[RMDB]
RNA sequence: GGGAACGACUCGAGUAGAGUCGAAAAGAUAUGGACUUCCCUACUUUUGACGUGUGUCGGAAACGAUUUCGACACGAUAAGUAGCGGAAGUCCUAAGUCAAAACCUGAAGGGUUCGCCCUUCAGGAACCUCACAGCAUGGUUCGCCAUGCUGUGAGGAAAAGAAACAACAACAACAAC
Reactivity to DMS in 0.01 (KOAc 150mM, MgCl2 10mM, bicine 150mM(pH8.5), 24C), signal-to-noise 2, nucleotides 027 to 126: g000a030u020a300u000g000g000a030c000u010u010c000c000c010u000a010c000u010u000u020u000g000a170c230g020u000g030u020g000u000c000g000g000a000a080a160c300g020a180u000u000u000c030g000a010c000a010c000g000a030u000a000a000g010u000a000g010c140g020g000a010a000g020u000c010c000u000a010a060g010u000c030a100a060a120a140c020c000u000g000a020a000g000g000g030u010u030c300g000c000c000c000u000u000c000a010g000g000a010a040
Reactivity to 2A3 in 0.01 (KOAc 150mM, MgCl2 10mM, bicine 150mM(pH8.5), 24C), signal-to-noise 2, nucleotides 027 to 126: g020a010u070a060u130g010g010a010c000u000u000c000c030c000u000a000c000u060u170u100u120g280a140c150g220u210g000u040g030u170c020g000g090a030a100a150c260g300a300u000u020u030c020g010a010c010a010c000g000a010u040a000a000g010u020a010g040c180g040g070a000a000g000u000c000c000u000a010a000g020u000c010a010a030a080a100c000c000u010g000a000a010g050g000g000u070u160c300g130c000c020c000u010u000c000a000g010g000a000a000
This 177-nucleotide RNA was probed chemically with DMS and 2A3. Conditions: 150 mM KOAc, 10 mM MgCl2 and 150 mM bicine (pH 8.5), 24 C. The 2A3 profile rests on 2,546 reads.